[RMDB]
RNA sequence: GGGAACGACUCGAGUAGAGUCGAAAAAGCGAAAGCGAAGCGCCGUAAGGCUUCGGGGACGGGUGAGCCGGCGGCCAGCGGCGAAGCCCAAUAUCUGUCGGGAGUUCCCGGGGUAGUGGCGACGGGAUCACAAGGACUAAUUCGUUAGUCCUUGUGAAAAAGAAACAACAACAACAAC
Reactivity to 2A3 in 0.01 (KOAc 150mM, MgCl2 10mM, bicine 150mM(pH8.5), 24C), signal-to-noise 8, nucleotides 027 to 126: a000g100c070g050a080a010a010g040c020g030a060a020g050c020g010c010c000g040u080a100a050g140g010c000u010u020c000g000g000g010g010a020c040g000g030g020u190g050a020g030c000c020g050g070c040g030g040c090c010a020g020c000g010g000c010g020a020a020g000c000c000c000a050a040u220a050u090c060u040g250u140c060g070g020g020a090g010u020u020c010c000c010g000g000g000g000u110a120g070u040g060g010c000g010a040c020g040g040g030a030
Reactivity to DMS in 0.01 (KOAc 150mM, MgCl2 10mM, bicine 150mM(pH8.5), 24C), signal-to-noise 6, nucleotides 027 to 126: a140g030c040g000a080a080a130g010c030g010a130a140g010c030g020c010c020g020u020a110a120g000g000c010u010u000c010g010g000g000g000a040c020g000g000g010u010g020a300g010c000c010g000g040c040g000g010c050c040a080g020c040g000g010c010g000a080a150g000c010c000c010a090a080u040a060u010c030u010g000u030c180g000g010g000a160g020u000u010c010c000c000g000g000g000g000u000a060g020u010g010g010c020g000a060c050g000g000g010a190